[RMDB]
RNA sequence: GGGAACGACUCGAGUAGAGUCGAAAACGCCGCCGCCGUCGUCGACGUGGAACACGGCGAUCUGCUCGCCGUUGACGAGCGCGCACACGCCGGUGUUCGGCACGAUCUCGUCGAGCGCGCAGACGGAUGGUUUUAUCAUCUUCGGAUGAUAAAACCAAAAAGAAACAACAACAACAAC
Reactivity to DMS in 0.01 (KOAc 150mM, MgCl2 10mM, bicine 150mM(pH8.5), 24C), signal-to-noise 3, nucleotides 027 to 126: c090g030c030c000g020c090c020g030c000c020g000u000c070g030u000c030g010a050c020g020u010g000g010a040a060c050a030c010g000g010c010g010a060u000c130u000g000c040u000c000g000c010c010g000u010u000g010a100c070g020a090g010c010g020c160g020c060a070c120a060c040g020c000c010g010g010u000g010u000u000c000g030g020c050a090c090g010a110u000c030u000c010g010u000c020g000a080g020c010g010c100g030c020a080g020a030c010g000g010a110
Reactivity to 2A3 in 0.01 (KOAc 150mM, MgCl2 10mM, bicine 150mM(pH8.5), 24C), signal-to-noise 2, nucleotides 027 to 126: c040g040c010c020g020c010c010g020c010c010g020u030c010g050u030c030g020a100c020g030u050g040g010a030a000c020a000c000g010g020c000g010a230u040c040u130g040c010u010c010g010c000c020g050u050u200g080a070c040g030a070g000c020g000c010g000c000a010c000a000c020g020c000c030g110g060u060g050u100u110c000g040g000c020a010c020g050a100u040c030u000c030g010u010c010g010a080g110c020g000c040g010c010a000g010a010c000g000g030a050

An RNA of 177 nucleotides, treated with DMS and 2A3 and read out base by base. The 2A3 profile rests on 3,097 reads. The RNA was probed in 150 mM KOAc, 10 mM MgCl2 and 150 mM bicine (pH 8.5) at 24 C.